[RMDB]
RNA sequence: GGGAACGACUCGAGUAGAGUCGAAAAAAAGAUAUGGAAACCAGGGAGCGAAAUCAUGCGAGGAAUCGGAAACGAUUCUACCCACCGCAUACGUGAUUUCGCGAAGAACUGGUUUCCUAAGUCAAAACUUAAUAUUUCCGUUCGCGGAAAUAUUAAGAAAAGAAACAACAACAACAAC
Reactivity to DMS in 0.01 (KOAc 150mM, MgCl2 10mM, bicine 150mM(pH8.5), 24C), signal-to-noise 3, nucleotides 027 to 126: a070a100a090g000a050u010a300u000g000g000a020a000a000c010c000a000g000g000g000a110g000c020g010a020a020a010u000c010a000u000g010c020g000a130g020g000a010a020u000c000g000g000a080a150a120c000g010a040u000u000c010u000a040c080c030c110a300c180c020g000c040a090u020a100c220g000u010g030a040u010u000u000c000g020c020g000a060a100g000a110a090c000u010g000g000u000u000u000c000c000u000a020a070g010u020c030a050a090a110a150
Reactivity to 2A3 in 0.01 (KOAc 150mM, MgCl2 10mM, bicine 150mM(pH8.5), 24C), signal-to-noise 1, nucleotides 027 to 126: a000a000a000g090a070u180a050u180g010g010a000a000a010c000c000a000g010g040g000a060g020c010g000a000a000a000u030c020a010u130g020c020g010a060g010g020a030a010u000c020g000g000a070a060a000c010g010a010u000u040c000u050a080c080c050c000a020c000c010g000c030a100u140a300c150g090u070g010a000u000u030u030c000g000c000g030a030a010g000a010a020c010u000g000g000u000u000u030c000c000u000a030a000g020u000c040a070a070a100a120
Overview
The record gives the reactivity of an RNA of 177 nucleotides to DMS and 2A3. The 2A3 profile rests on 2,856 reads. For DMS, 2,258 sequencing reads were counted. It was measured as part of the RMDB library TTRDES. The reactions ran in a buffer of 150 mM KOAc, 10 mM MgCl2 and 150 mM bicine (pH 8.5), at 24 C. 2A3 adducts were read by reverse transcription with SuperScript II with manganese.